[RMDB]
RNA sequence: GGGAACGACUCGAGUAGAGUCGAAAACAGGCGGGACAGCCCGGAAGUCCAGGCCACCAGGGCCUAGCGGUAAGUGUCAGGUGGAGCCACAGGGGCUGGCCAGGGGCUAGUGGCUGAUGAGGUUAGAGUACUUAUCCCCGUUCGCGGGGAUAAGUACAAAAGAAACAACAACAACAAC
Reactivity to DMS in 0.01 (KOAc 150mM, MgCl2 10mM, bicine 150mM(pH8.5), 24C), signal-to-noise 1, nucleotides 027 to 126: c040a160g020g020c090g000g000g030a120c100a120g020c000c050c000g000g030a170a140g000u000c000c050a110g000g010c010c000a090c030c070a110g010g000g000c020c030u000a060g020c070g030g000u000a110a140g010u000g000u010c030a050g000g030u000g010g000a030g000c050c010a030c130a150g070g000g000g000c110u000g000g000c060c050a140g000g010g000g010c020u010a080g000u000g040g010c040u000g000a140u020g000a080g000g000u000u020a040g000a200